[RMDB]
RNA sequence: GGGAACGACUCGAGUAGAGUCGAAAAUCUUGUUCUCGAGGGCCUUCCUUCUUCUGUGGUCCCGCCUCUCCUGGUCGGUGAACCCCCUGGCUUUGGAUUUCCUCCCAGGUGUAGAAUCAAUCUCCAUUACCGAACGUCUUCGGACGUUCGAAAAGAAACAACAACAACAAC
Reactivity to 2A3 in 0.01 (KOAc 150mM, MgCl2 10mM, bicine 150mM(pH8.5), 24C), signal-to-noise 4, nucleotides 027 to 129: u070c010u000u130g020u080u020c010u010c030g020a100g000g030g050c000c000u020u010c030c000u040u100c020u060u020c020u060g090u060g080g030u070c030c010c010g000c020c000u050c010u000c030c030u060g010g030u060c040g010g020u020g070a050a050c000c000c030c010c000u010g020g000c000u120u040u040g040g020a080u060u030u030c020c000u010c000c000c000a030g040g030u030g020u050a040g080a090a020u110c020a040a060u000c050u000c060c040a110u090u060a050c060
Reactivity to DMS in 0.01 (KOAc 150mM, MgCl2 10mM, bicine 150mM(pH8.5), 24C), signal-to-noise 1, nucleotides 027 to 129: u040c060u000u030g020u050u010c020u000c050g030a110g000g000g000c090c090u000u010c000c060u020u060c040u030u040c000u030g010u000g030g080u040c000c030c060g020c110c040u030c080u000c000c000u020g030g010u030c100g030g000u020g020a100a170c170c000c000c050c020u030g000g030c100u060u030u080g000g000a140u000u000u000c060c030u040c030c020c050a040g010g020u050g040u000a060g040a090a120u030c100a090a140u010c030u020c000c000a050u050u130a160c160

Structure probing data (2A3 and DMS) for a 170-nucleotide construct. DMS adducts were read by reverse transcription with MarathonRT. Reactivities are given for positions 27 through 129. For 2A3 the reverse transcriptase was SuperScript II with manganese. Conditions: 150 mM KOAc, 10 mM MgCl2 and 150 mM bicine (pH 8.5), 24 C. Source: RMDB library 15KLIB, as collected in RNAgym. The 2A3 profile rests on 8,495 reads. For DMS, 11,940 sequencing reads were counted.